[RMDB]
RNA sequence: GGGAACGACUCGAGUAGAGUCGAAAACUGGUGAGGAGACUCCCUUCUAAUGGAUAGGACCGUGCAGACGAUAAAGCCCACAGAAAGCGUCUCUUUCUACGCUCGGCCAGCCUGGGUUUUGUGGCGCCCCUCUAGAUUAUUUCGAUAAUCUAGAGGGAAAAGAAACAACAACAACAAC
Reactivity to 2A3 in 0.01 (KOAc 150mM, MgCl2 10mM, bicine 150mM(pH8.5), 24C), signal-to-noise 4, nucleotides 027 to 126: c020u050g080g000u090g040a040g010g040a040g030a050c030u050c000c030c020u050u040c050u110a150a100u140g050g010a040u070a120g050g010a040c000c030g020u040g010c050a030g020a130c010g010a020u080a070a080a020g030c000c040c000a030c000a020g120a030a110a000g010c010g020u010c020u010c000u070u110u030c030u050a020c030g020c040u030c010g050g010c010c010a010g030c020c020u030g010g010g000u040u060u110u140g030u040g020g010c010g050c020
Reactivity to DMS in 0.01 (KOAc 150mM, MgCl2 10mM, bicine 150mM(pH8.5), 24C), signal-to-noise 7, nucleotides 027 to 126: c070u000g010g010u010g010a080g010g000a090g010a120c070u000c050c020c050u010u000c050u000a120a090u000g000g010a080u000a060g000g010a070c060c030g010u000g010c110a060g000a060c060g010a090u000a040a060a140g000c020c010c010a050c130a060g000a040a070a090g010c220g000u000c060u000c050u000u000u000c050u000a070c090g010c020u000c060g010g010c050c030a070g000c030c040u000g000g000g010u000u000u000u010g010u010g000g020c080g010c110